[RMDB]
RNA sequence: GGGAACGACUCGAGUAGAGUCGAAAACAGGGUUUCAGGGAUUUAUCGAAUCUUGAGAAUUUUAACGUUUCGUACUCAACGCCUUUAUUAUUUGAGAUGUGUUGUAUGGAGUCAAUCUUAGAGCACAAUUGAAGAGGCGGUUCGCCGCCUCUUCAAUAAAAGAAACAACAACAACAAC
Reactivity to DMS in 0.01 (KOAc 150mM, MgCl2 10mM, bicine 150mM(pH8.5), 24C), signal-to-noise 1, nucleotides 027 to 126: c050a090g000g000g010u090u010u020c040a170g000g000g000a060u000u000u030a080u010c110g100a040a010u000c030u000u000g010a270g000a120a020u000u060u000u090a230a110c050g000u000u000u000c020g000u000a060c050u020c040a070a020c180g000c100c000u000u020u050a010u000u000a030u000u010u010g010a020g060a100u030g000u000g000u020u000g000u000a140u000g030g000a110g000u000c130a030a100u010c030u000u020a170g000a020g020c100a100c000a100
Reactivity to 2A3 in 0.01 (KOAc 150mM, MgCl2 10mM, bicine 150mM(pH8.5), 24C), signal-to-noise 1, nucleotides 027 to 126: c130a000g160g000g000u120u100u170c030a050g000g000g000a000u190u260u000a240u190c060g000a000a170u000c000u060u020g000a020g020a000a050u220u200u080u300a190a030c020g000u000u000u020c000g000u060a000c000u000c060a000a000c000g020c000c000u160u020u180a300u140u060a080u000u180u110g300a190g190a300u300g000u160g000u080u000g030u000a200u030g000g000a000g080u060c000a000a030u000c000u000u000a250g020a000g000c000a020c000a300

The record gives the reactivity of an RNA of 177 nucleotides to DMS and 2A3. The data come from the RNA Mapping Database (RMDB), library OK1LIB. For 2A3 the reverse transcriptase was SuperScript II with manganese. Conditions: 150 mM KOAc, 10 mM MgCl2 and 150 mM bicine (pH 8.5), 24 C. For DMS the reverse transcriptase was MarathonRT.